[RMDB]
Conditions: 150 mM KOAc, 10 mM MgCl2 and 150 mM bicine (pH 8.5), 24 C. An RNA of 177 nucleotides, treated with 2A3 and DMS and read out base by base. The 2A3 profile rests on 6,336 reads. For 2A3 the reverse transcriptase was SuperScript II with manganese. Source: RMDB libraries RFM100 and RFMREP, as collected in RNAgym.
RNA sequence: GGGAACGACUCGAGUAGAGUCGAAAAUUGCUGACGUUGCUGCAUUUGUCUCAGAUGUUUUCGCUGCGGCUGCCGAUGCGGCUGCCGCCUUUUCCGACGCUGCCGCCGCAGUGGCUGACGCACCUGCGAAGGCAGAAGCGUUCGCGCUUCUGCCUUCAAAAGAAACAACAACAACAAC
Reactivity to 2A3 in 0.01 (KOAc 150mM, MgCl2 10mM, bicine 150mM(pH8.5), 24C), signal-to-noise 5, nucleotides 027 to 126: u130u070g000c020u020g020a030c030g030u040u050g010c020u030g010c020a070u050u070u100g070u010c010u010c050a050g050a160u060g080u040u050u040u100c070g000c070u050g000c000g010g000c010u010g000c000c010g060a070u060g020c010g000g000c010u010g000c010c010g030c000c000u110u130u070u040c060c030g030a040c050g010c020u020g000c000c010g010c000c010g000c000a020g020u040g050g000c010u020g000a010c010g010c020a020c000c010u050g000c030
Reactivity to DMS in 0.01 (KOAc 150mM, MgCl2 10mM, bicine 150mM(pH8.5), 24C), signal-to-noise 2, nucleotides 027 to 126: u020u030g010c030u010g000a100c150g000u000u010g010c000u030g010c030a070u010u000u000g040u030c030u020c040a130g020a110u030g000u000u020u000u020c090g010c130u010g020c030g020g000c030u000g010c010c030g020a060u010g030c020g000g000c010u010g010c020c100g000c010c050u000u000u000u010c150c050g000a050c170g000c050u000g000c000c070g000c010c010g000c020a020g000u010g010g020c000u010g030a040c040g020c030a060c080c060u000g010c220